Chemical mapping of a 177-nucleotide RNA with 2A3 and DMS. For DMS the reverse transcriptase was MarathonRT. The reactions ran in a buffer of 150 mM KOAc, 10 mM MgCl2 and 150 mM bicine (pH 8.5), at 24 C. Reactivities are given for positions 27 through 126.

RNA sequence: GGGAACGACUCGAGUAGAGUCGAAAAGUAACUGAGAUUAAGCCGCGCUCGUAUAGCUUGAGGGCUGUCUCUAGACGCAGACGUUUAUCCAGGAGUAUAUGCUUCUUCUCCGACUCCUCAUAGCCACGUAUGGGGAGCCAUUCGUGGCUCCCCAUACAAAAGAAACAACAACAACAAC
Reactivity to 2A3 in 0.01 (KOAc 150mM, MgCl2 10mM, bicine 150mM(pH8.5), 24C), signal-to-noise 3, nucleotides 027 to 126: g090u080a090a050c050u050g020a020g000a170u110u100a070a000g000c010c010g030c010g000c010u000c030g100u160a050u140a120g100c040u030u090g070a110g000g060g080c020u020g020u010c000u000c000u010a010g020a060c000g000c030a010g050a120c090g060u000u020u100a140u090c040c020a010g010g020a030g070u080a090u010a040u200g010c000u040u040c000u070u030c010u010c020c010g020a040c020u050c020c000u030c030a070u060a060g030c050c070a070c100
Reactivity to DMS in 0.01 (KOAc 150mM, MgCl2 10mM, bicine 150mM(pH8.5), 24C), signal-to-noise 2, nucleotides 027 to 126: g040u030a090a180c060u000g010a050g010a060u020u000a040a090g030c000c030g000c060g000c040u010c110g000u040a070u010a040g000c050u020u020g000a120g000g020g000c010u000g010u000c040u020c010u000a020g030a080c010g010c050a030g010a070c070g020u020u020u000a030u010c120c020a090g000g030a080g020u020a080u000a070u000g010c060u000u000c040u010u000c010u010c040c040g020a060c080u000c020c030u000c040a050u010a070g010c020c020a030c200